[RMDB]
RNA sequence: GGGAACGACUCGAGUAGAGUCGAAAAAAACGACAGCGUCGUCCUCGCACCGCUCGCAUAUUCCGGAUCCGAGGUCGCACGAUGGGCGACAGGCGGUGACCUCAAUCUUAUGCUGGUCGAUACAGUGAAACAGCUUCAGGAUUCCGGUUAUCGGAUACUAGACAAAAACAUUCGUGUUUUUGUCUAGAAAAGAAACAACAACAACAAC
Reactivity to 2A3 in 0.01 (KOAc 150mM, MgCl2 10mM, bicine 150mM(pH8.5), 24C), signal-to-noise 4, nucleotides 027 to 156: a000a000a010c090g070a060c070a070g030c030g040u020c010g000u010c010c010u010c010g020c040a080c040c030g030c030u120c030g090c080a070u060a110u230u030c030c000g010g000a040u010c020c040g010a010g000g040u010c010g000c040a120c060g040a090u090g010g000g020c040g010a030c000a020g070g030c030g010g020u010g010a010c010c010u020c020a070a130u070c050u120u150a080u160g010c000u030g030g050u040c030g050a070u140a250c070a070g070u070g170a040a140a060c010a000g020c000u160u140c060a020g020g000a030u190u020c010c020g020g030u020u030a080u050c010g020g010a000u050a160
Reactivity to DMS in 0.01 (KOAc 150mM, MgCl2 10mM, bicine 150mM(pH8.5), 24C), signal-to-noise 2, nucleotides 027 to 156: a050a050a030c020g010a060c060a080g030c100g030u000c010g020u000c010c010u010c070g050c040a150c030c010g020c030u000c070g000c080a160u020a190u010u000c020c050g000g010a080u000c020c030g000a090g030g010u000c030g050c010a060c060g020a130u010g020g010g010c040g000a060c000a090g000g020c030g000g050u000g010a070c010c010u000c030a080a050u000c050u000u010a060u000g020c000u000g010g000u000c040g010a280u000a130c090a150g040u010g010a150a050a030c030a060g020c020u010u000c110a140g020g010a100u000u000c010c010g010g000u000u000a020u000c020g010g020a210u010a120
Structure probing data (2A3 and DMS) for a 207-nucleotide construct. The RNA was probed in 150 mM KOAc, 10 mM MgCl2 and 150 mM bicine (pH 8.5) at 24 C.